Chemical mapping of a 207-nucleotide RNA with 2A3. Source: RMDB library M2RFPK, as collected in RNAgym. Conditions: 150 mM KOAc, 10 mM MgCl2 and 150 mM bicine (pH 8.5), 24 C. For 2A3, 446 sequencing reads were counted. Values cover nucleotides 27 to 156.
RNA sequence: GGGAACGACUCGAGUAGAGUCGAAAAACCAAGUCUGGGGGCCGAUGAGGGUUGGCUCAAAGUAGGGUUUUGACUUGAAAACUCAAGCUGUGACCCCAAAACUAUGGAGGUAAAUGAGAAUCCUCCUAAAACUAUGGACACUUCGGUGUCCAUAGAACCGUGACAAUUGGUUCGCCAAUUGUCACGGAAAAGAAACAACAACAACAAC
Reactivity to 2A3 in 0.01 (KOAc 150mM, MgCl2 10mM, bicine 150mM(pH8.5), 24C), signal-to-noise 1, nucleotides 027 to 156: a000c050c020a050a000g170u030c020u070g000g000g000g000g080c040c070g060a060u110g040a190g040g070g110u050u010g010g010c000u010c050a060a000a000g120u130a020g000g020g000u060u060u090u090g030a040c000u030u040g100a000a010a300a110c010u000c010a040a000g000c030u060g030u110g290a170c000c000c060c010a080a060a030a000c100u080a100u100g000g050a050g000g000u070a120a110a030u180g030a040g150a020a120u050c010c000u000c000c000u010a010a010a010a010c010u010a000u000g000g010a000c010a000c000u020u030c250g100g000u020g010u000c000c000a000u000a000g000a000a050